[RMDB]
RNA sequence: GGGAACGACUCGAGUAGAGUCGAAAACGUUGUCAUCGACAACACCCUAUGCAUUCAUGCUCUGUAAGGAUGCGCCGAAAGGUGAGCAAGCCCGAGUUGACCAGACCUGAAAUGCAACACUUUAGAGAAAACCCGAAGCAGUUCGCUGCUUCGGGAACAAAAGGAUUGUGUUCGCACAAUCCUUUUGAAAAGAAACAACAACAACAAC
Reactivity to DMS in 0.01 (KOAc 150mM, MgCl2 10mM, bicine 150mM(pH8.5), 24C), signal-to-noise 2, nucleotides 027 to 156: c150g000u030u000g030u000c010a220u010c070g020a100c020a080a030c020a110c010c000c020u000a130u000g030c010a030u000u000c070a190u000g020c040u000c020u000g000u000a290a130g010g010a110u000g030c010g000c010c000g040a110a110a170g010g040u000g000a180g030c060a090a160g000c020c020c000g000a140g040u000u000g000a090c100c040a070g000a120c030c040u000g000a000a060a080u000g000c030a070a060c070a080c080u010u010u000a130g000a260g000a100a060a120a130c000c000c000g030a050a030g010c000a040g030u000u000c260g040c020u000g000c010u000u000c000g010g000g000a000a000
Reactivity to 2A3 in 0.01 (KOAc 150mM, MgCl2 10mM, bicine 150mM(pH8.5), 24C), signal-to-noise 1, nucleotides 027 to 156: c080g000u000u000g020u020c100a130u140c300g010a010c000a020a020c000a070c020c020c000u080a080u110g030c020a010u000u000c010a020u100g000c070u030c000u000g060u080a050a020g030g000a010u000g000c000g010c010c040g080a120a030a000g040g010u040g060a030g000c010a020a080g060c000c000c040g030a040g060u060u060g150a050c000c050a000g020a040c000c040u060g030a130a080a050u020g060c020a060a010c050a060c160u100u110u240a030g040a000g040a090a110a050a060c050c000c000g000a000a000g000c000a000g030u040u210c270g080c130u000g000c010u010u000c000g000g010g000a000a000

Annotation:
Structure probing data (DMS and 2A3) for a 207-nucleotide construct. For DMS, 3,507 sequencing reads were counted. The RNA was probed in 150 mM KOAc, 10 mM MgCl2 and 150 mM bicine (pH 8.5) at 24 C.